[RMDB]
RNA sequence: GGGAACGACUCGAGUAGAGUCGAAAAGGGGAGGUAGGCUUAGAAGCAGCCACCCUUUAAAGAGUGCGUAACAGCUCACCCGCCGAGACUCGGGGCGCCGAAAAUGGACGGGGCUCAAGCCGGCCGCCGUAAUGUCAGUCUUCGGACUGACAUUACGAAAAGAAACAACAACAACAAC
Reactivity to 2A3 in 0.01 (KOAc 150mM, MgCl2 10mM, bicine 150mM(pH8.5), 24C), signal-to-noise 4, nucleotides 027 to 126: g020g030g000g000a060g020g030u060a030g030g000c000u010u020a020g000a050a000g000c000a000g000c000c010a000c000c000c000u000u020u000a000a000a000g010a000g000u020g000c030g010u030a020a010c000a030g000c000u000c000a020c000c000c000g000c010c000g090a130g040a150c020u030c080g050g000g010g010c090g100c010c020g070a110a080a000a050u240g080g050a020c010g000g000g050g000c000u010c040a020a010g000c020c000g010g020c000c020g030c030
Reactivity to DMS in 0.01 (KOAc 150mM, MgCl2 10mM, bicine 150mM(pH8.5), 24C), signal-to-noise 3, nucleotides 027 to 126: g000g000g000g000a030g000g020u000a120g010g000c000u000u000a300g000a150a300g000c000a110g010c010c000a050c000c000c000u000u000u000a000a010a050g000a180g000u000g000c000g000u010a110a110c130a270g020c000u000c010a080c000c020c000g010c040c000g000a060g020a070c040u020c070g000g000g000g010c010g000c010c000g010a060a040a080a120u030g030g000a110c030g000g010g010g030c020u010c090a100a070g000c020c010g010g010c000c020g000c100
Description
An RNA of 177 nucleotides, treated with 2A3 and DMS and read out base by base. 2A3 adducts were read by reverse transcription with SuperScript II with manganese. Conditions: 150 mM KOAc, 10 mM MgCl2 and 150 mM bicine (pH 8.5), 24 C. For DMS the reverse transcriptase was MarathonRT. The 2A3 profile rests on 5,386 reads.